Background:
Structure probing data (DMS and 2A3) for a 207-nucleotide construct. For 2A3, 2,249 sequencing reads were counted. For DMS the reverse transcriptase was MarathonRT. The reactions ran in a buffer of 150 mM KOAc, 10 mM MgCl2 and 150 mM bicine (pH 8.5), at 24 C. The DMS profile rests on 3,181 reads. High DMS reactivity at an A or C suggests that its Watson-Crick edge is free.

[RMDB]
RNA sequence: GGGAACGACUCGAGUAGAGUCGAAAAAUAAUGGUAAUAAUCACCGGUAAUAUCGGCAUUACAAAGAGUGCAUUUACCCGUGAAGCUACGAUCGGGAGUCGGUGAUUUAGUGUAAUUUGAGGCCAAGAGUUGAUUCACUACAUCCAUAUCUACACGAGUAGUAUAGGACGUUCGCGUCCUAUACUACAAAAGAAACAACAACAACAAC
Reactivity to DMS in 0.01 (KOAc 150mM, MgCl2 10mM, bicine 150mM(pH8.5), 24C), signal-to-noise 2, nucleotides 027 to 156: a200u000a090a080u010g000g020u000a090a090u000a060a050u010c000a000c000c010g000g000u010a060a150u000a100u000c050g040g000c030a040u010u000a300c110a100a140a110g010a090g030u000g000c000a140u000u000u000a100c000c030c020g000u000g000a160a090g000c120u010a040c010g000a140u000c020g010g020g090a160g030u000c040g010g060u010g020a050u000u000u000a040g040u000g020u000a030a110u000u010u000g020a150g010g020c030c050a050a090g020a110g010u000u020g010a170u020u000c030a090c050u000a050c030a070u000c020c020a030u010a080u000c030u000a050c040a110c090g010a210
Reactivity to 2A3 in 0.01 (KOAc 150mM, MgCl2 10mM, bicine 150mM(pH8.5), 24C), signal-to-noise 4, nucleotides 027 to 156: a000u210a010a040u060g050g000u080a060a080u060a090a010u100c010a010c010c010g000g000u080a100a050u110a110u290c080g040g000c010a010u010u090a090c130a110a110a060g160a060g020u020g010c030a050u040u080u180a130c000c000c000g020u010g050a050a010g060c130u140a090c090g020a050u070c000g000g010g000a040g030u040c020g020g010u000g000a010u000u000u020a000g000u000g010u020a050a080u050u050u130g040a030g080g000c020c010a060a030g040a020g030u040u130g050a090u050u040c020a010c040u070a040c020a050u030c030c020a020u030a070u100c030u050a040c060a020c120g030a030